[RMDB]
RNA sequence: GGGAACGACUCGAGUAGAGUCGAAAAAGGCACUUCGCAAUGUGUGCUCAAACAUUGCUUAUUCAAACACGCUUCAGAAUGUGCGACAAAGAAACAUUGUUAUAAGAGCUAAUGUUUUAACAUUGGCAAAACCGAGUUAGCUUCGGCUAACUCGGAACUAGCCUGUAAGGUUCGCCUUACAGGCUAGAAAAGAAACAACAACAACAAC
Reactivity to 2A3 in 0.01 (KOAc 150mM, MgCl2 10mM, bicine 150mM(pH8.5), 24C), signal-to-noise 6, nucleotides 027 to 156: a000g120g000c010a010c010u010u020c010g010c010a010a010u010g000u000g000u010g030c080u070c170a040a050a000c010a010u020u020g010c010u080u110a150u110u100c070a040a090a050c040a010c070g050c030u100u120c050a060g060a240a080u090g040u030g050c030g060a060c090a050a130a020g070a040a070a020c020a040u020u050g040u110u100a120u070a280a060g030a010g020c010u000a010a000u010g020u020u100u050u230a110a010c010a000u000u000g020g000c010a000a040a060a030c000c000g000a000g000u000u000a000g000c010u020u030c230g020g000c000u000a000a010c000u000c000g000g000a000a000
Reactivity to DMS in 0.01 (KOAc 150mM, MgCl2 10mM, bicine 150mM(pH8.5), 24C), signal-to-noise 1, nucleotides 027 to 156: a080g010g040c020a070c030u010u000c130g040c110a100a060u010g000u000g070u000g030c110u000c180a130a070a040c040a090u000u000g030c030u010u010a070u010u000c030a060a140a100c040a000c050g020c060u000u010c150a120g000a050a040u010g010u010g010c030g010a190c100a080a050a060g030a110a140a060c040a120u000u010g040u010u000a080u000a090a190g000a200g000c000u010a020a050u010g010u000u000u030u000a080a010c010a050u030u010g010g030c010a050a030a070a160c010c000g000a050g020u000u000a010g040c010u000u000c300g040g020c010u010a000a060c010u000c020g000g010a010a030
An RNA of 207 nucleotides, treated with 2A3 and DMS and read out base by base. Source: RMDB library M2RFPK, as collected in RNAgym. 2A3 adducts were read by reverse transcription with SuperScript II with manganese. The 2A3 profile rests on 4,664 reads. Conditions: 150 mM KOAc, 10 mM MgCl2 and 150 mM bicine (pH 8.5), 24 C. DMS adducts were read by reverse transcription with MarathonRT.